Source: RMDB library OK1LIB, as collected in RNAgym. An RNA of 177 nucleotides, treated with 2A3 and DMS and read out base by base. The DMS profile rests on 857 reads. For 2A3 the reverse transcriptase was SuperScript II with manganese. For 2A3, 1,069 sequencing reads were counted. The reactions ran in a buffer of 150 mM KOAc, 10 mM MgCl2 and 150 mM bicine (pH 8.5), at 24 C.
RNA sequence: GGGAACGACUCGAGUAGAGUCGAAAAGGGAAUGACAUUUCUCUUGAGCUAGUUGGAGAUUUUGAUUCCUAACUCUCAAUGUCAUACAACCAGAUAUACACAUCCACAUCACUCAGAGAUACAGCUGUAUCGUGCCUUUCUUCGGAAAGGCACGAUAAAAAGAAACAACAACAACAAC
Reactivity to 2A3 in 0.01 (KOAc 150mM, MgCl2 10mM, bicine 150mM(pH8.5), 24C), signal-to-noise 2, nucleotides 027 to 126: g080g010g000a080a040u030g010a020c040a030u010u100u070c010u000c000u040u040g010a030g000c050u050a020g070u040u060g040g000a190g020a230u020u070u220u300g130a120u110u000c000c010u070a070a010c030u020c000u000c050a020a020u010g030u050c000a000u060a090c020a020a160c000c000a000g060a070u080a000u090a180c020a000c000a080u000c030c000a020c000a110u020c050a000c050u030c020a030g000a000g010a060u100a160c020a070g050c000u060g000
Reactivity to DMS in 0.01 (KOAc 150mM, MgCl2 10mM, bicine 150mM(pH8.5), 24C), signal-to-noise 1, nucleotides 027 to 126: g000g000g000a180a040u000g000a150c090a040u000u000u000c040u000c030u000u000g000a120g000c230u000a080g000u000u030g060g060a050g000a060u000u000u060u000g000a080u000u000c000c010u050a040a100c200u000c070u000c010a030a000u030g000u000c000a000u000a170c110a200a110c100c040a050g000a190u000a220u000a080c000a060c000a000u000c010c000a120c000a010u080c060a100c150u000c070a000g000a000g000a120u010a030c120a000g030c060u040g000